[RMDB]
Chemical mapping of a 177-nucleotide RNA with DMS and 2A3. It was measured as part of the RMDB library OK1LIB.
RNA sequence: GGGAACGACUCGAGUAGAGUCGAAAAUGGUGCGUCGUUUGCGCGAUCGCGGGGCCGACGUCCGCGUAGCCAUGACCGAAGCGGCAAAAGCCUUUAUCACCCCACUUAGCUUGCAGGCGGUAUCAGGCCGUCCAUCAUGAUUCGUCAUGAUGGACGGAAAAGAAACAACAACAACAAC
Reactivity to DMS in 0.01 (KOAc 150mM, MgCl2 10mM, bicine 150mM(pH8.5), 24C), signal-to-noise 2, nucleotides 027 to 126: u000g000g020u010g030c100g020u000c000g000u000u010u030g020c070g020c070g010a060u030c050g000c070g010g030g010g020c070c040g020a040c070g000u000c010c060g020c030g020u020a050g000c020c030a080u000g000a090c060c040g020a120a090g000c020g020g020c050a020a110a110a070g000c040c000u010u010u000a050u020c120a110c110c010c010c020a100c090u020u000a060g010c040u000u020g020c070a030g020g020c020g010g000u020a040u050c090a130g010g010
Reactivity to 2A3 in 0.01 (KOAc 150mM, MgCl2 10mM, bicine 150mM(pH8.5), 24C), signal-to-noise 5, nucleotides 027 to 126: u110g030g000u070g030c040g020u020c040g020u040u060u070g100c070g000c030g050a070u190c060g000c010g010g010g010g000c030c020g060a070c030g040u000c010c000g010c010g000u010a030g020c040c040a060u100g020a040c050c000g020a080a010g020c000g010g000c030a050a030a000a160g040c010c000u050u090u050a190u120c040a140c020c000c000c000a020c050u110u120a030g020c010u020u110g000c040a040g050g010c010g030g000u030a060u130c040a010g140g020
Background
High DMS reactivity at an A or C suggests that its Watson-Crick edge is free. For DMS, 2,666 sequencing reads were counted. For DMS the reverse transcriptase was MarathonRT. The reactions ran in a buffer of 150 mM KOAc, 10 mM MgCl2 and 150 mM bicine (pH 8.5), at 24 C.